This 177-nucleotide RNA was probed chemically with DMS. The RNA was probed in 150 mM KOAc, 10 mM MgCl2 and 150 mM bicine (pH 8.5) at 24 C. High DMS reactivity at an A or C suggests that its Watson-Crick edge is free. The DMS profile rests on 908 reads.

RNA sequence: GGGAACGACUCGAGUAGAGUCGAAAAGAUAUGGAUGGGAACUACGGUGCGCACAGCGUUGAAACAACCUUUGCUAUCGGAAACGAUAGCAAAGGUUGUGGAGCUGGAUCACCGCCCAUCCUAAGUCGACCAUACAGAUGUUCGCAUCUGUAUGGUCAAAAGAAACAACAACAACAAC
Reactivity to DMS in 0.01 (KOAc 150mM, MgCl2 10mM, bicine 150mM(pH8.5), 24C), signal-to-noise 1, nucleotides 027 to 126: g030a100u040a300u000g010g010a030u010g020g000g030a160a140c200u010a300c000g010g010u000g030c270g000c300a300c010a000g010c000g000u000u000g010a300a110a020c000a000a000c000c000u000u010u000g010c000u000a010u000c000g020g000a120a090a170c000g000a020u000a010g000c000a000a000a010g010g000u000u000g010u000g010g010a070g000c010u000g010g010a170u010c000a000c000c010g040c010c000c000a000u000c010c010u010a010a070g020u000c090
It was measured as part of the RMDB library TTRINS.